[RMDB]
RNA sequence: GGGAACGACUCGAGUAGAGUCGAAAAGCAUCACCUCGAAACCUUUGAUGGUCGCAUAGGCCGUUUUCAGUGUCUUGAACCCUCUGACCGGCCUGAUCAAUUGCUUGAGCUUACCGUGAUCGGCCUCAACGAUAUUGUUCAGAUAUUUCAACUGCCGCCAGUCUUUUCGAUUCGUCGAAAAGACUGGAAAAGAAACAACAACAACAAC
Reactivity to 2A3 in 0.01 (KOAc 150mM, MgCl2 10mM, bicine 150mM(pH8.5), 24C), signal-to-noise 2, nucleotides 027 to 156: g060c010a080u070c040a060c040c040u090c090g070a120a090a110c030c040u180u090u180g110a190u180g000g020u040c010g000c090a100u160a190g060g000c000c020g000u090u000u030u050c010a000g000u010g030u080c050u100u190g070a110a070c000c010c000u040c050u040g050a040c000c020g010g000c000c010u040g000a010u040c060a030a070u070u080g060c040u040u060g010a020g010c030u160u090a050c020c010g080u090g140a230u210c000g020g010c020c010u000c020a040a010c010g040a030u030a040u130u090g000u040u020c020a010g010a130u060a110u070u130u060c030a090a060c050u030g050c030c120g010